[RMDB]
RNA sequence: GGGAACGACUCGAGUAGAGUCGAAAAUAUUACAUCUUCGGAUGUAAUAACUGGUGGUGGCUGGCUUGUUGCUAGUGGCGCAACUGUUGCCUUGACUGCGCAAUCGCUCUGAAUUCGUUCAGAGCAACAAUCACCGAUAUUUCGAUAUCGGUGAUUGAAAAGAAACAACAACAACAAC
Reactivity to DMS in 0.01 (KOAc 150mM, MgCl2 10mM, bicine 150mM(pH8.5), 24C), signal-to-noise 6, nucleotides 027 to 126: u000a010u000u000a010c000a010u000c000u000u010c200g020g010a000u000g000u000a000a010u010a030a130c090u010g000g030u000g010g020u000g000g010c040u000g010g000c060u000u010g010u000u010g010c020u000a080g020u000g020g010c070g010c060a050a080c070u000g010u000u000g010c030c030u000u000g010a100c070u000g000c060g020c130a100a080u010c160g010c010u000c000u000g010a020a040u000u010c170g020u000u000c000a010g000a010g010c010a040a050
Reactivity to 2A3 in 0.01 (KOAc 150mM, MgCl2 10mM, bicine 150mM(pH8.5), 24C), signal-to-noise 5, nucleotides 027 to 126: u050a000u000u000a000c000a000u000c010u040u060c220g110g010a010u000g010u020a000a000u020a020a040c070u080g070g030u030g020g030u030g030g040c070u020g010g000c010u060u120g030u050u060g070c020u030a070g100u030g130g000c050g000c030a050a020c040u070g130u210u070g040c000c000u050u090g060a090c080u030g000c050g000c060a040a100u130c100g010c000u000c000u010g010a030a020u070u050c120g040u080u000c020a000g000a000g000c000a000a000
The record gives the reactivity of an RNA of 177 nucleotides to DMS and 2A3. High DMS reactivity at an A or C suggests that its Watson-Crick edge is free. For DMS the reverse transcriptase was MarathonRT. For 2A3, 7,856 sequencing reads were counted. The DMS profile rests on 10,092 reads. 2A3 adducts were read by reverse transcription with SuperScript II with manganese.